[RMDB]
This 177-nucleotide RNA was probed chemically with 2A3 and DMS. Conditions: 150 mM KOAc, 10 mM MgCl2 and 150 mM bicine (pH 8.5), 24 C. High DMS reactivity at an A or C suggests that its Watson-Crick edge is free. It was measured as part of the RMDB library OK2TRN.
RNA sequence: GGGAACGACUCGAGUAGAGUCGAAAAUACACGGCGCAUCCACCAGCCAAUUUGACUCUCACGUAGGCCGGUGGUCUUUAGUUGUUGGCGUCUAACGUAAGGAGAGUAUCAACUAAGGUUAGCGUCAGCUAAGAUAAAGCUUCGGCUUUAUCUUAGCAAAAGAAACAACAACAACAAC
Reactivity to 2A3 in 0.01 (KOAc 150mM, MgCl2 10mM, bicine 150mM(pH8.5), 24C), signal-to-noise 4, nucleotides 027 to 126: u130a010c060a020c090g040g000c020g000c020a030u020c000c010a000c000c000a000g020c000c010a030a030u120u040u100g070a060c020u030c010u010c080a050c070g070u060a070g000g000c010c010g010g000u000g000g020u020c020u020u050u060a020g000u010u020g030u030u030g060g000c030g070u030c020u020a080a020c050g120u110a040a040g070g030a020g010a000g020u030a080u110c030a020a070c010u030a050a060g040g020u050u080a010g000c000g010u010c040a010
Reactivity to DMS in 0.01 (KOAc 150mM, MgCl2 10mM, bicine 150mM(pH8.5), 24C), signal-to-noise 8, nucleotides 027 to 126: u010a110c130a110c130g000g000c030g010c050a180u010c010c000a020c010c010a050g020c000c010a090a130u010u010u000g000a100c060u010c070u000c020a090c190g020u000a130g010g000c000c020g010g030u000g000g000u000c020u000u000u000a050g020u000u000g000u000u010g010g000c020g010u010c030u000a030a040c030g020u010a080a100g000g010a070g000a100g000u000a130u000c090a030a070c050u000a030a060g000g010u000u000a050g010c000g010u000c030a130